[RMDB]
RNA sequence: GGGAACGACUCGAGUAGAGUCGAAAAGAUAUGGACACGCGAUAAGUCGGCGACUCGGAAACGAGUCCCGACUUUUGACGCGUCGUCCUAAGUCAAAGCCCCUUGGAGGUUCGCCUCCAAGGGGCAACUCUUUAAAUGGCUUCGGCCAUUUAAAGAGAAAAGAAACAACAACAACAAC
Reactivity to DMS in 0.01 (KOAc 150mM, MgCl2 10mM, bicine 150mM(pH8.5), 24C), signal-to-noise 1, nucleotides 027 to 126: g000a040u000a300u000g010g000a010c010a040c020g010c000g000a190u010a000a000g010u010c020g010g020c190g030a010c010u000c000g010g000a090a090a160c000g000a000g000u000c020c000c010g010a000c000u000u000u000u000g000a160c020g020c000g010u000c170g020u010c000c000u000a030a030g000u000c030a110a150a090g010c000c020c020c020u000u010g010g020a030g020g020u000u000c250g010c000c010u000c000c000a010a000g000g000g000g000c010a000a010